[RMDB]
An RNA of 177 nucleotides, treated with 2A3 and DMS and read out base by base. Conditions: 150 mM KOAc, 10 mM MgCl2 and 150 mM bicine (pH 8.5), 24 C.
RNA sequence: GGGAACGACUCGAGUAGAGUCGAAAAGAACGCCACUUCGGUGGCGUUCGAAGAUCUACCACACGUAGAUCACUAUCGUGUGAGACAUCGAUACAUGUCAAAUGGUCCGGAAGUUCGCUUCCGGAAACGCCCUAGUAACAUUCGUGUUACUAGGGCGAAAAGAAACAACAACAACAAC
Reactivity to 2A3 in 0.01 (KOAc 150mM, MgCl2 10mM, bicine 150mM(pH8.5), 24C), signal-to-noise 2, nucleotides 027 to 126: g000a000a010c000g000c000c010a000c040u050u080c280g070g010u010g030g050c020g000u000u000c000g010a000a010g020a010u000c020u050a070c030c050a050c020a010c110g030u030a010g000a150u160c060a040c080u050a050u170c080g000u020g000u000g060a080g000a050c030a030u050c070g070a020u070a220c110a040u090g010u100c030a060a040a120u160g130g030u030c000c000g000g010a010a000g000u040u130c220g000c080u010u000c000c010g000g000a000a000a000
Reactivity to DMS in 0.01 (KOAc 150mM, MgCl2 10mM, bicine 150mM(pH8.5), 24C), signal-to-noise 2, nucleotides 027 to 126: g000a000a020c000g010c000c000a010c000u000u000c190g010g020u000g020g030c010g010u000u000c000g010a090a130g010a050u000c030u000a100c060c060a030c050a040c060g020u000a010g010a140u000c260a090c030u000a040u000c040g020u010g010u000g010a240g000a070c090a000u000c040g000a110u010a100c220a040u010g030u000c070a050a070a070u030g000g000u010c000c000g010g000a030a000g000u000u010c160g000c000u000u000c000c000g000g000a000a010a080
For 2A3 the reverse transcriptase was SuperScript II with manganese.